[RMDB]
RNA sequence: GGGAACGACUCGAGUAGAGUCGAAAAAAAUUGACGGAGCUACACCACAAGGAGUGGAUUGUGCGGCUUAAUUUGACUCAACGCGAGGAAACUUACCAGGGCCAAGUAUUGUGUAGAAACGAGCAAUACACAGUAUUACAUUCGUGUAAUACUGUGUAAAAGAAACAACAACAACAAC
Reactivity to 2A3 in 0.01 (KOAc 150mM, MgCl2 10mM, bicine 150mM(pH8.5), 24C), signal-to-noise 7, nucleotides 027 to 126: a000a000a010u110u050g030a030c060g020g020a020g020c010u050a020c020a010c010c020a030c020a100a110g250g040a120g080u050g010g060a160u120u180g030u050g050c080g000g000c010u020u030a030a030u070u040u040g020a020c010u000c020a050a010c010g020c030g020a010g000g060a060a050a050c020u040u070a060c030c010a030g010g020g020c000c010a030a020g020u030a060u150u120g030u010g030u030a040g030a080a070a020c040g010a030g040c040a030a000u010
Reactivity to DMS in 0.01 (KOAc 150mM, MgCl2 10mM, bicine 150mM(pH8.5), 24C), signal-to-noise 6, nucleotides 027 to 126: a040a050a060u020u010g010a080c150g010g000a090g010c020u010a060c050a080c030c020a020c030a160a120g020g010a190g020u010g000g010a100u010u020g010u010g010c070g000g000c040u000u010a040a060u010u000u010g010a030c020u000c010a090a050c050g000c020g000a030g010g000a080a060a070c060u000u010a110c000c010a100g010g000g010c050c040a050a090g010u010a100u010u000g010u000g000u000a050g000a060a040a030c040g010a060g040c280a050a050u000
Source information
An RNA of 177 nucleotides, treated with 2A3 and DMS and read out base by base. The RNA was probed in 150 mM KOAc, 10 mM MgCl2 and 150 mM bicine (pH 8.5) at 24 C. Reactivities are given for positions 27 through 126. Source: RMDB libraries RFM100 and RFMREP, as collected in RNAgym.